[RMDB]
Record summary: Source: RMDB library RFM100, as collected in RNAgym. The record gives the reactivity of an RNA of 177 nucleotides to 2A3 and DMS. The DMS profile rests on 790 reads. The RNA was probed in 150 mM KOAc, 10 mM MgCl2 and 150 mM bicine (pH 8.5) at 24 C. The 2A3 profile rests on 970 reads.

RNA sequence: GGGAACGACUCGAGUAGAGUCGAAAACAGACUGCGCAUUAACACGCUCUAUCAGGAUGGGAGGCUAUUCAAUAUCAUUGUUCUGUCCGGAAGACAGCUUAUACUGAUAUCUAUGGUAAUUUAAAGUGCCCCAUGACUAAUUCGUUAGUCAUGGGGCAAAAGAAACAACAACAACAAC
Reactivity to 2A3 in 0.01 (KOAc 150mM, MgCl2 10mM, bicine 150mM(pH8.5), 24C), signal-to-noise 2, nucleotides 027 to 126: c050a000g020a030c010u050g010c040g010c020a030u000u200a040a040c020a000c020g060c000u060c020u030a140u060c010a020g070g010a090u050g030g000g050a070g020g000c020u040a050u090u050c070a040a070u010a030u050c010a040u000u060g020u130u060c010u000g010u000c000c000g050g040a010a000g050a010c000a000g000c000u110u100a080u040a090c020u020g080a020u000a050u070c050u040a080u090g040g000u060a160a080u060u080u220a070a050a090g040u000
Reactivity to DMS in 0.01 (KOAc 150mM, MgCl2 10mM, bicine 150mM(pH8.5), 24C), signal-to-noise 1, nucleotides 027 to 126: c000a070g060a050c010u000g000c030g000c000a070u000u000a090a010c120a080c030g030c050u000c030u000a230u080c030a000g000g000a010u050g000g000g000a200g000g020c090u000a000u050u090c240a000a140u000a010u000c020a020u000u070g000u020u030c000u000g100u000c100c030g020g050a200a080g000a060c050a030g000c300u090u030a090u020a060c190u000g000a000u000a000u000c080u000a050u140g000g000u000a170a000u080u000u000a000a200a070g090u020